An RNA of 207 nucleotides, treated with DMS and 2A3 and read out base by base. For DMS, 4,184 sequencing reads were counted. It was measured as part of the RMDB library OK3TST.
RNA sequence: GGGAACGACUCGAGUAGAGUCGAAAACGUACGUGGAGACACGUACGACGAGACUUCGGUCUCGAAUCGCAUGAACUUGGGCCAUGCGCGCGCGAGGCGUCGGUGCUCGGCGAGCGCACGGACGCAAAAACUCGCGCGUAAAUAACUAGCUUAAGAACGAUUUAAAUACUUUCGAGUAUUUAAAUCGAAAAGAAACAACAACAACAAC
Reactivity to DMS in 0.01 (KOAc 150mM, MgCl2 10mM, bicine 150mM(pH8.5), 24C), signal-to-noise 2, nucleotides 027 to 156: c010g020u020a000c010g010u000g000g010a300g020a300c000a020c000g020u000a010c020g020a100c040g010a250g040a020c020u000u000c260g040g010u000c010u000c000g010a030a090u000c020g010c010a060u000g000a080a130c060u000u000g010g000g010c020c000a040u010g010c030g000c030g000c010g000c000g000a070g030g010c010g030u000c040g000g000u000g020c010u000c010g000g010c120g020a190g010c110g020c010a020c010g000g010a030c000g010c120a070a040a060a150a300c000u010c010g010c010g010c010g040u000a010a100a110u010a090a070c020u000a070g020c020u010u000a030a040g020a210a280
Reactivity to 2A3 in 0.01 (KOAc 150mM, MgCl2 10mM, bicine 150mM(pH8.5), 24C), signal-to-noise 6, nucleotides 027 to 156: c010g000u010a000c000g000u010g010g020a050g010a030c000a000c000g000u000a000c010g010a010c000g000a000g000a000c010u080u140c280g100g000u010c000u000c010g020a040a090u090c020g000c000a000u010g030a180a190c010u010u010g010g000g000c000c000a000u000g000c010g010c000g000c000g000c000g010a010g010g010c010g010u010c070g140g000u010g000c020u020c030g040g110c240g070a030g010c020g000c020a010c030g100g000a000c000g000c000a040a100a080a090a110c000u000c000g000c000g000c000g000u000a000a000a000u070a010a020c150u100a020g000c000u020u010a020a000g010a070a030